Structure probing data (DMS and 2A3) for a 177-nucleotide construct. The DMS profile rests on 1,564 reads. Reactivities are given for positions 27 through 126.
[RMDB]
RNA sequence: GGGAACGACUCGAGUAGAGUCGAAAACAAAUGUUGAACCAUGUGUACCUGGUGUUAGAACACGCAUGACAUCAUUAUUUGCAAGUACAGCAGAUACAGGGUAUAAGCCGCCACCCAAUGCCUUACCCUCUAACCGGGUGUUCGCACCCGGUUAGAGAAAAGAAACAACAACAACAAC
Reactivity to DMS in 0.01 (KOAc 150mM, MgCl2 10mM, bicine 150mM(pH8.5), 24C), signal-to-noise 1, nucleotides 027 to 126: c020a040a030a020u040g010u000u000g020a120a040c080c070a100u000g000u000g000u010a060c130c030u030g000g000u000g030u010u010a050g030a130a080c000a180c020g000c010a050u000g000a010c060a050u020c090a030u030u000a020u000u010u030g010c080a030a060g000u040a050c170a130g020c080a000g000a020u030a010c300a060g000g000g010u020a020u040a000a060g000c000c000g060c060c000a000c000c000c010a080a070u060g000c000c000u010u000a100c000c010
Reactivity to 2A3 in 0.01 (KOAc 150mM, MgCl2 10mM, bicine 150mM(pH8.5), 24C), signal-to-noise 2, nucleotides 027 to 126: c060a000a100a060u100g040u080u080g020a070a080c020c000a050u030g000u040g000u120a040c000c000u110g030g040u060g070u130u150a050g090a100a050c070a000c120g010c030a040u050g020a080c010a070u060c040a020u030u160a020u070u110u080g020c000a050a040g040u080a140c030a090g000c000a000g020a010u120a070c040a050g130g020g000u080a070u020a080a080g010c010c050g010c000c000a020c020c050c000a010a030u050g020c000c010u000u030a000c000c000

The 2A3 profile rests on 1,037 reads.
For 2A3 the reverse transcriptase was SuperScript II with manganese.
The reactions ran in a buffer of 150 mM KOAc, 10 mM MgCl2 and 150 mM bicine (pH 8.5), at 24 C.
The data come from the RNA Mapping Database (RMDB), library OK1LIB.